The record gives the reactivity of an RNA of 177 nucleotides to 2A3 and DMS. Reactivities are given for positions 27 through 126. It was measured as part of the RMDB library OK2TST.
[RMDB]
RNA sequence: GGGAACGACUCGAGUAGAGUCGAAAAGCUGCAGGGGGACUGGGGCACGCAGGGGUAGGCAGCCCCAGGUGCCCCCAGCGUGAGUGCCUCUGAGCUGGGGUGCCCGGAGCUGCUGGUGCUUGGAGCCCAUUAGCCAGAGUUUCGACUCUGGCUAAUGAAAAGAAACAACAACAACAAC
Reactivity to 2A3 in 0.01 (KOAc 150mM, MgCl2 10mM, bicine 150mM(pH8.5), 24C), signal-to-noise 2, nucleotides 027 to 126: g030c040u160g060c040a050g010g000g000g000g020a010c020u030g000g000g020g000c020a010c060g110c060a050g000g070g000g060u050a040g010g010c020a020g010c040c000c000c000a010g000g000u050g020c030c010c010c000c010a000g000c000g030u070g040a070g020u110g120c010c010u010c030u060g070a070g040c010u020g010g000g060g000u060g010c000c000c000g040g030a020g000c020u020g010c030u040g020g060u050g020c030u040u070g070g010a050g040c000c010
Reactivity to DMS in 0.01 (KOAc 150mM, MgCl2 10mM, bicine 150mM(pH8.5), 24C), signal-to-noise 4, nucleotides 027 to 126: g010c040u000g010c080a090g000g000g010g000g010a100c070u000g010g000g020g010c030a040c110g020c080a110g020g010g000g030u000a100g010g010c040a090g010c000c000c000c000a020g000g010u010g010c080c010c010c020c020a000g000c040g000u010g010a070g010u010g010c100c030u000c040u000g000a140g020c030u000g000g010g010g000u000g000c010c010c030g000g000a070g020c030u000g000c030u000g010g020u000g010c050u000u010g000g000a200g000c030c040